Structure probing data (2A3 and DMS) for a 177-nucleotide construct. The RNA was probed in 150 mM KOAc, 10 mM MgCl2 and 150 mM bicine (pH 8.5) at 24 C. The data come from the RNA Mapping Database (RMDB), library M2PK90. The 2A3 profile rests on 6,884 reads.

[RMDB]
RNA sequence: GGGAACGACUCGAGUAGAGUCGAAAAGCUCAGUGUGUGUCGCCCCGUCGUCUAGUGCUGGUUCUAGGGCUGGGGCGUCAGCAUCCAGGUCUGACGGGACGGGCAGAAUCUCGCCAUCAACGAUAAAUCAUAAUCACUCUUUCGAGAGUGAUUAUGAAAAAGAAACAACAACAACAAC
Reactivity to 2A3 in 0.01 (KOAc 150mM, MgCl2 10mM, bicine 150mM(pH8.5), 24C), signal-to-noise 2, nucleotides 027 to 126: g030c000u020c070a050g010u040g000u050g010u020g020u100c010g000c010c000c010c010g030u030c010g020u010c010u020a030g020u030g130c080u130g140g080u110u030c010u020a010g030g040g030c050u080g040g000g000g000c010g000u000c000a000g000c000a030u020c040c030a030g010g090u040c040u060g030a030c040g030g000g020a010c000g020g020g000c020a020g030a050a060u040c030u010c050g020c040c000a140u100c040a050a050c030g050a020u080a130a110a040
Reactivity to DMS in 0.01 (KOAc 150mM, MgCl2 10mM, bicine 150mM(pH8.5), 24C), signal-to-noise 6, nucleotides 027 to 126: g010c030u000c030a130g020u000g010u010g020u010g010u000c010g010c010c000c000c010g010u000c020g000u010c010u000a030g020u000g010c090u000g010g010u000u000c020u000a040g010g000g000c030u010g030g000g000g010c030g010u000c020a070g010c020a040u010c060c080a080g010g000u010c040u010g000a060c060g000g010g020a040c060g020g000g010c060a050g000a100a080u010c040u000c060g010c050c040a080u000c110a050a070c080g010a100u010a040a080a110